[RMDB]
RNA sequence: GGGAACGACUCGAGUAGAGUCGAAAAGAGCUGCGGGCGCGGUGAGAGACACAGCCGGAGUCGUGCACGGUACCGCAGGCUGAGCACGUCGUCGAGCAGCCACACCGGUUGAGACCGCAGCAGCUGCCCACCGACGAUCAUUCGUGAUCGUCGGUGGAAAAGAAACAACAACAACAAC
Reactivity to 2A3 in 0.01 (KOAc 150mM, MgCl2 10mM, bicine 150mM(pH8.5), 24C), signal-to-noise 1, nucleotides 027 to 126: g050a000g000c000u030g000c000g020g000g050c090g000c000g000g000u000g020a130g000a040g040a030c040a000c000a090g000c000c040g000g010a020g010u030c040g030u000g000c000a020c110g000g060u060a180c060c160g100c080a080g020g020c000u040g010a000g020c000a000c000g000u000c040g080u000c000g010a060g040c000a000g040c010c000a010c000a010c030c000g000g010u160u180g160a120g020a090c000c000g000c000a000g000c000a000g020c000u070g000c030